[RMDB]
RNA sequence: GGGAACGACUCGAGUAGAGUCGAAAAUGGACUCUUCCAUCCAACAGAAGGGGAAAGAGAGGCCAGGAGGCAUUGGGAAAAUUGUCCGCAGCCACACCAGCAUCGAGUGGUGGAGUUGGUGUGUCUGCCUCCAUAGCCCGGGACUGUGGCUGGGACAGCCGCAUGACCCAUUCGUGGGUCAUGCGGCAAAAGAAACAACAACAACAAC
Reactivity to 2A3 in 0.01 (KOAc 150mM, MgCl2 10mM, bicine 150mM(pH8.5), 24C), signal-to-noise 1, nucleotides 027 to 156: u010g010g010a040c030u000c010u090u000c040c010a120u010c030c020a070a070c110a110g180a160a160g000g000g040g010a000a100a020g040a010g010a020g010g000c060c090a070g000g010a010g080g000c090a110u080u220g020g010g170a070a040a080a080u130u080g010u040c060c030g000c130a000g010c000c000a000c000a000c000c000a030g030c020a060u110c050g090a050g150u110g030g090u140g010g010a040g000u060u000g000g030u050g000u010g050u000c010u040g000c010c000u030c010c000a020u070a040g010c000c000c020g000g000g050a040c060u020g030u100g010g050c000u010g010g050g030a010c010a010